[RMDB]
RNA sequence: GGGAACGACUCGAGUAGAGUCGAAAAAGCCAUCAUACGUGAUGGCAAGUAAGAAAUCUUUGUAGUUUUCCGCGAGUCAACGUGAAAACUGAAGAGAUUUUUUACAGAGACCGAUUACGAUCGGUCAACCAUUUACCACUUUCGAGUGGUAAAUGGUAAAAGAAACAACAACAACAAC
Reactivity to DMS in 0.01 (KOAc 150mM, MgCl2 10mM, bicine 150mM(pH8.5), 24C), signal-to-noise 6, nucleotides 027 to 126: a110g020c000c000a010u000c000a050u020a100c210g030u010g010a010u000g000g020c010a020a010g010u000a000a000g000a000a000a000u000c000u000u000u000g020u030a010g010u000u000u000u000c030c030g010c080g000a220g020u050c280a140a140c000g010u020g010a010a000a010a010c000u010g010a090a050g000a010g000a000u000u000u000u000u000u000a000c000a120g010a150g010a010c000c000g000a010u000u010a110c170g020a110u000c000g000g010u000c000a040
Reactivity to 2A3 in 0.01 (KOAc 150mM, MgCl2 10mM, bicine 150mM(pH8.5), 24C), signal-to-noise 9, nucleotides 027 to 126: a000g000c010c000a000u000c000a000u020a110c280g080u040g010a000u000g000g000c010a000a020g010u000a000a000g000a000a000a000u000c010u010u040u050g180u210a020g000u010u010u000u010c090c040g020c030g050a070g170u190c090a130a080c050g060u120g080a000a000a000a000c010u030g030a080a010g010a000g000a010u000u000u000u000u000u000a000c010a000g100a000g000a020c000c000g000a000u030u060a090c260g050a020u000c000g000g000u000c000a000